The data come from the RNA Mapping Database (RMDB), library OK2TST. Chemical mapping of a 177-nucleotide RNA with 2A3 and DMS. For 2A3, 10,199 sequencing reads were counted. DMS adducts were read by reverse transcription with MarathonRT. For 2A3 the reverse transcriptase was SuperScript II with manganese. The reactions ran in a buffer of 150 mM KOAc, 10 mM MgCl2 and 150 mM bicine (pH 8.5), at 24 C. High DMS reactivity at an A or C suggests that its Watson-Crick edge is free.

[RMDB]
RNA sequence: GGGAACGACUCGAGUAGAGUCGAAAAAGUACGUCAAAAUCUUGCUGAUGAGCCGUGGUGGCGAUCUUGGCAUGAUGAUCAUGAUGUUAUGUGGUUUUGCUGCCUAUAUGACCCACAUUGGCGCGAAACCACUACGCAUUUUCGAAUGCGUAGUGGUAAAAGAAACAACAACAACAAC
Reactivity to 2A3 in 0.01 (KOAc 150mM, MgCl2 10mM, bicine 150mM(pH8.5), 24C), signal-to-noise 7, nucleotides 027 to 126: a000g090u060a000c020g010u010c010a020a000a000a150u020c010u020u040g010c010u040g020a080u050g040a020g000c010c020g150u230g180g260u300g040g030c010g060a070u010c010u040u040g010g000c000a010u020g010a020u020g020a070u120c070a100u110g040a010u030g050u140u080a080u130g120u130g070g100u010u040u050u110g030c080u130g000c010c010u150a150u000a040u260g060a080c000c020c000a040c000a050u030u080g010g000c010g000c000g020a050a030
Reactivity to DMS in 0.01 (KOAc 150mM, MgCl2 10mM, bicine 150mM(pH8.5), 24C), signal-to-noise 8, nucleotides 027 to 126: a110g020u000a020c040g020u000c030a040a070a170a020u000c010u000u000g000c000u000g010a020u000g000a300g020c010c010g020u010g010g020u010g020g020c000g000a070u000c130u000u010g010g010c010a020u000g000a030u000g000a080u010c300a130u000g000a030u000g010u010u010a060u010g020u000g010g010u000u000u000u000g010c020u010g030c000c000u010a070u010a060u000g000a130c050c010c020a150c090a060u000u000g010g010c000g010c010g010a030a050